Structure probing data (DMS and 2A3) for a 177-nucleotide construct. For 2A3, 8,879 sequencing reads were counted.
[RMDB]
RNA sequence: GGGAACGACUCGAGUAGAGUCGAAAAGAGAUGCGGCUGGACUUCAACAGCCUCACGGGAAGCAUCCCCGCAGAAUGGGGCAAUGCUGGUGCAUUUCCUAGCCUGCUGCGCGCGCACAUUGGCGGCAGCUAAUAGGCGCAUUCGUGCGCCUAUUAGCAAAAGAAACAACAACAACAAC
Reactivity to DMS in 0.01 (KOAc 150mM, MgCl2 10mM, bicine 150mM(pH8.5), 24C), signal-to-noise 8, nucleotides 027 to 126: g010a080g010a070u000g020c080g020g010c010u000g000g010a130c180u010u010c210a110a130c030a020g000c000c000u000c090a040c070g010g010g020a140a050g010c020a020u010c010c000c000c010g020c220a110g020a130a120u010g010g000g010g010c100a050a010u000g000c010u000g000g010u000g010c020a060u000u000u000c000c020u000a110g000c050c020u000g010c030u000g000c020g010c050g020c060g010c090a100c160a150u000u010g010g010c020g010g010c050a060
Reactivity to 2A3 in 0.01 (KOAc 150mM, MgCl2 10mM, bicine 150mM(pH8.5), 24C), signal-to-noise 6, nucleotides 027 to 126: g040a010g010a030u030g010c020g020g000c020u030g010g110a190c090u180u080c160a100a070c020a040g000c000c000u020c020a030c020g060g030g090a050a010g000c020a300u300c000c000c010c000g000c030a180g120a190a090u280g000g020g000g000c020a020a020u010g000c010u020g010g040u080g000c010a040u050u000u000c010c000u010a050g020c000c010u030g010c010u030g000c110g000c000g010c000g000c060a050c030a290u080u150g060g000c000g020g000c010a010